[RMDB]
RNA sequence: GGGAACGACUCGAGUAGAGUCGAAAAGAUAUGGACCGUACCCAGGGAGAAGGGUGGUCGGAAACGACCACAUUUCGAGGAUCUGGAACGGUCCUAAGUCAAACAAUGCGUCUUCGGACGCAUUGAAUCCAUCUAUCAUCUUCGGAUGAUAGAUGGAAAAAGAAACAACAACAACAAC
Reactivity to 2A3 in 0.01 (KOAc 150mM, MgCl2 10mM, bicine 150mM(pH8.5), 24C), signal-to-noise 3, nucleotides 027 to 126: g010a000u030a040u130g000g010a000c020c000g000u100a180c040c010c020a000g030g050g010a300g010a030a010g060g000g010u010g010g010u000c010g010g010a060a050a010c020g000a000c000c000a000c010a010u010u020u010c030g060a300g110g020a080u050c010u010g000g000a030a020c000g010g000u000c000c000u000a000a000g000u000c020a020a040a090c010a010a010u010g000c010g020u000c000u060u070c300g170g000a000c000g000c000a000u000u000g000a000a030
Reactivity to DMS in 0.01 (KOAc 150mM, MgCl2 10mM, bicine 150mM(pH8.5), 24C), signal-to-noise 4, nucleotides 027 to 126: g010a050u000a300u010g000g010a010c010c000g010u000a110c240c000c000a010g010g010g000a050g010a050a020g010g010g040u000g010g000u000c010g030g000a060a080a130c020g010a020c000c010a000c010a050u020u000u000c010g000a130g000g010a050u010c000u000g000g000a190a050c010g020g000u010c000c000u000a000a060g010u000c040a190a150a260c010a010a010u000g000c000g010u000c000u000u010c300g030g020a000c000g010c000a000u000u000g000a090a140